Chemical mapping of a 177-nucleotide RNA with DMS and 2A3. The reactions ran in a buffer of 150 mM KOAc, 10 mM MgCl2 and 150 mM bicine (pH 8.5), at 24 C. For 2A3 the reverse transcriptase was SuperScript II with manganese. The DMS profile rests on 12,530 reads. Source: RMDB library M2PK50, as collected in RNAgym.
[RMDB]
RNA sequence: GGGAACGACUCGAGUAGAGUCGAAAACGCGUCAGAUUCGUCUGACGCGAAAGCAUAGAACAGCGCUAUCAAGUAUUAUAGUUCUAUGCAACUAUAGCGCUAAAACGAUACCGUUCGCGGUAUCGAAGUUUUGUAUUUAGUUCGCUAAAUACAAAACAAAAGAAACAACAACAACAAC
Reactivity to DMS in 0.01 (KOAc 150mM, MgCl2 10mM, bicine 150mM(pH8.5), 24C), signal-to-noise 7, nucleotides 027 to 126: c020g010c000g000u000c000a010g010a030u000u010c190g010u000c000u000g000a010c000g000c000g010a020a030a090g010c040a020u000a020g000a040a030c040a090g020c020g020c010u000a190u010c180a090a110g020u010a090u010u000a080u000a090g010u000u000c020u000a020u000g010c020a060a060c090u000a050u010a030g020c030g030c020u000a070a060a080a160c010g010a010u000a000c000c000g020u000u010c210g020c010g010g000u000a000u000c000g000a020a050
Reactivity to 2A3 in 0.01 (KOAc 150mM, MgCl2 10mM, bicine 150mM(pH8.5), 24C), signal-to-noise 9, nucleotides 027 to 126: c010g000c010g000u000c000a000g010a040u030u070c110g050u000c100u000g000a000c000g000c000g000a000a000a000g000c010a020u020a030g010a030a020c030a050g020c010g000c030u030a040u170c080a190a040g130u070a140u300u110a100u100a050g010u010u000c020u040a050u050g000c010a010a000c010u060a020u070a110g020c010g020c050u080a050a080a020a040c010g000a000u000a010c010c000g010u030u050c260g000c010g090g000u000a000u000c000g000a050a000